[RMDB]
RNA sequence: GGGAACGACUCGAGUAGAGUCGAAAACGACGAUAGUUCGCUAUCGUCGCAAGGGCUGUUUUUCUCGCUGACUUUCAGCCCCAAACAAAAAAGUCACCAAAAUAAUCGGUGGCUUCGGCCACCGAAAGUUCCUUAAUCAAUUCGUUGAUUAAGGAACAAAAGAAACAACAACAACAAC
Reactivity to DMS in 0.01 (KOAc 150mM, MgCl2 10mM, bicine 150mM(pH8.5), 24C), signal-to-noise 3, nucleotides 027 to 126: c020g010a010c000g010a000u000a010g020u000u010c250g030c000u000a010u000c000g020u000c000g000c100a090a090g000g000g040c000u000g000u000u000u000u000u010c050u000c150g000c190u000g000a010c000u000u000u000c010a010g000c000c000c000c210a010a010a250c050a000a000a000a020a030a020g000u000c000a020c010c030a080a070a130a110u010a130a080u000c000g020g030u000g020g000c010u000u020c170g020g000c000c000a000c000c010g010a010a020a050
Reactivity to 2A3 in 0.01 (KOAc 150mM, MgCl2 10mM, bicine 150mM(pH8.5), 24C), signal-to-noise 3, nucleotides 027 to 126: c010g000a000c000g000a000u010a000g020u040u050c160g020c130u000a000u010c000g000u000c000g000c010a070a120g000g000g000c000u000g000u000u000u000u010u000c050u020c060g030c090u010g000a010c000u010u000u000c000a000g000c000c000c030c050a010a020a020c010a010a010a010a000a010a000g030u050c010a010c000c000a020a110a040a060u220a060a100u030c010g010g020u010g000g030c030u050u060c240g090g010c000c000a000c000c000g000a000a000a000